Structure probing data (2A3 and DMS) for a 177-nucleotide construct.
RNA sequence: GGGAACGACUCGAGUAGAGUCGAAAAAGGUGAGUAAGAUGGCCAGCAAGAGAUAUGGGAUAUGGUAUGCUCAGUUAUAUUGAUAAGUCCUAUAUGGGCACUUGGAGCAGCACUCUUGCCCAUAAUCCUGCAUUAAGCGAUUCGUCGCUUAAUGCAGAAAAGAAACAACAACAACAAC
Reactivity to 2A3 in 0.01 (KOAc 150mM, MgCl2 10mM, bicine 150mM(pH8.5), 24C), signal-to-noise 2, nucleotides 027 to 126: a000g080g010u040g020a010g000u010a090a000g040a100u030g030g050c020c040a030g030c030a100a000g040a010g010a070u010a030u160g000g000g060a030u060a040u160g000g040u020a050u070g000c000u000c070a010g020u140u070a130u020a030u140u040g100a050u040a300a040g020u010c010c020u050a060u040a090u300g010g000g000c010a010c080u050u110g030g000a050g030c040a020g030c010a050c020u040c000u000u070g010c010c000c000a010u040a050a060u090c050
Reactivity to DMS in 0.01 (KOAc 150mM, MgCl2 10mM, bicine 150mM(pH8.5), 24C), signal-to-noise 2, nucleotides 027 to 126: a080g000g010u000g010a020g010u000a080a080g010a080u010g000g010c010c070a110g010c080a050a050g020a090g030a060u000a010u010g010g000g010a080u000a100u000g010g000u000a040u000g010c020u010c080a060g010u010u000a080u010a120u010u010g000a090u010a040a100g020u000c010c010u000a080u000a040u010g010g010g000c070a060c140u000u000g030g000a090g000c040a060g020c140a180c040u000c120u000u000g010c000c000c000a030u010a030a130u000c090